Chemical mapping of a 207-nucleotide RNA with 2A3. The data come from the RNA Mapping Database (RMDB), library M2RFPK. High 2A3 reactivity points to a flexible backbone, as in loops and unpaired stretches.
RNA sequence: GGGAACGACUCGAGUAGAGUCGAAAAACGAGACGUACGCGACUCGAAUGGUAUUGUCGGCGUAAAAGAACAAGACGUCACCGGACGCGACCGGGCUAAAAAGCGAAACGUCAUCUACGGAUGACGAAAAACGGACCUGGGUUCGCCCAGGUCCGAAGUCAAAACGACAGUUCGCUGUCGUUUUGACAAAAGAAACAACAACAACAAC
Reactivity to 2A3 in 0.01 (KOAc 150mM, MgCl2 10mM, bicine 150mM(pH8.5), 24C), signal-to-noise 1, nucleotides 027 to 156: a000c060g000a050g010a040c010g010u040a000c060g010c020g080a060c030u040c060g010a050a120u210g120g020u210a170u160u220g050u050c050g010g060c000g000u030a000a030a130a060g060a050a000c050a090a000g090a030c010g000u010c000a000c040c000g000g010a020c010g000c000g020a010c000c000g000g000g020c040u020a010a010a010a010a010g000c030g000a080a010a000c020g000u000c000a000u000c020u000a000c160g110g000a000u010g000a030c020g040a140a000a000a000a000c010g000g000a000c000c000u000g000g000g000u000u050c080g020c070c000c000a000g010g000u000c000c000g000a000a000